[RMDB]
RNA sequence: GGGAACGACUCGAGUAGAGUCGAAAAAUGAGUUAAAAUUUAACUCGCAGAUUCACUCCUGAGUUAAACUUUUACUGGGAGUUAAAUUUUAACUCAUGGUGACGUGGGCGAAUCUCGAACGUUCGUUGCUCUAUUCGUAAUUCGUUACGAAUAGAGCAAAAGAAACAACAACAACAAC
Reactivity to 2A3 in 0.01 (KOAc 150mM, MgCl2 10mM, bicine 150mM(pH8.5), 24C), signal-to-noise 5, nucleotides 027 to 126: a000u010g000a000g000u000u000a000a010a000a020u010u010u000a000a000c000u000c010g150c040a010g020a160u110u110c050a010c090u120c050c060u100g030a010g050u030u100a100a130a090c050u070u090u100u300a100c000u040g030g100g000a000g000u000u000a010a000a000u000u000u010u000a000a000c000u000c000a000u000g000g030u100g060a060c140g060u180g040g020g040c030g030a030a040u030c000u010c010g000a060a030c010g010u020u010c030g020u010u030
Annotation
Structure probing data (2A3) for a 177-nucleotide construct. The reactions ran in a buffer of 150 mM KOAc, 10 mM MgCl2 and 150 mM bicine (pH 8.5), at 24 C. It was measured as part of the RMDB library RFM100.